[RMDB]
RNA sequence: GGGAACGACUCGAGUAGAGUCGAAAAGCACUCCGGGCCGAAUGGUCGAGUAGCACUCAGAGGGAGGAAUCCACACGGAGUAGAGCAGAGAAAUCACCUCCAGAGGACCCCUUCAGCGAACAGAGAGGAAGGAUUAUCUUCGGAUAAUCCAAAAGAAACAACAACAACAAC
Reactivity to 2A3 in 0.01 (KOAc 150mM, MgCl2 10mM, bicine 150mM(pH8.5), 24C), signal-to-noise 9, nucleotides 027 to 129: g030c020a010c040u000c020c020g030g010g000c020c020g170a160a160u300g010g000u010c010g000a000g010u050a020g010c030a020c040u030c040a020g020a050g050g030g000a080g030g030a040a050u010c010c000a050c010a010c140g020g010a010g020u140a060g030a040g020c130a010g030a020g040a130a080a050u080c040a050c010c010u040c010c000a020g010a030g020g000a040c030c000c000c000u030u070c030a040g030c010g030a030a010c020a030g080a000g000a000g080g040a060a050
Reactivity to DMS in 0.01 (KOAc 150mM, MgCl2 10mM, bicine 150mM(pH8.5), 24C), signal-to-noise 8, nucleotides 027 to 129: g000c060a100c040u030c040c120g010g000g020c050c020g000a120a100u090g010g030u010c020g010a040g020u050a090g000c010a200c030u000c000a070g030a100g000g000g000a050g000g000a030a060u030c000c000a080c100a140c170g030g020a050g030u030a110g020a080g040c100a100g000a080g000a090a100a080u000c050a150c120c010u020c060c010a070g020a120g050g000a050c150c070c030c020u030u050c050a060g000c010g020a030a050c050a080g030a040g010a060g000g000a120a080